[RMDB]
RNA sequence: GGGAACGACUCGAGUAGAGUCGAAAAGAAAAGAUGCAAAAGGAGCGCGUGCAAGAUUAGAGCCAGGACGAGCACGAGGAACACGACACGAACCGGAGUCCUGGCGCGUAUCCCGUUCAAAAGAAAAAUACGGGCUAAAUUUCGAUUUAGCCCGUAUAAAAGAAACAACAACAACAAC
Reactivity to 2A3 in 0.01 (KOAc 150mM, MgCl2 10mM, bicine 150mM(pH8.5), 24C), signal-to-noise 2, nucleotides 027 to 126: g050a000a020a000a070g010a010u020g030c070a020a020a020a020g030g000a010g010c000g000c020g000u040g040c060a000a060g090a210u100u110a020g020a000g030c000c010a000g000g000a010c020g000a050g080c110a000c130g010a180g000g000a100a000c010a030c120g260a130c010a060c170g020a110a000c020c000g010g010a030g000u000c000c000u000g000g020c000g000c000g000u050a110u050c000c010c020g010u000u070c040a040a050a050a050g120a010a050a010a000
Reactivity to DMS in 0.01 (KOAc 150mM, MgCl2 10mM, bicine 150mM(pH8.5), 24C), signal-to-noise 3, nucleotides 027 to 126: g010a080a070a070a080g000a050u010g000c010a040a060a100a070g010g010a060g030c020g000c080g000u000g000c010a110a050g020a150u020u010a070g000a150g030c010c000a010g000g030a010c000g000a150g020c090a050c050g030a120g000g020a040a160c050a140c190g000a090c170a070c110g010a040a150c140c000g010g010a210g000u010c010c000u000g020g000c000g000c040g000u000a060u000c020c000c010g000u020u010c120a050a060a090a100g020a040a090a110a060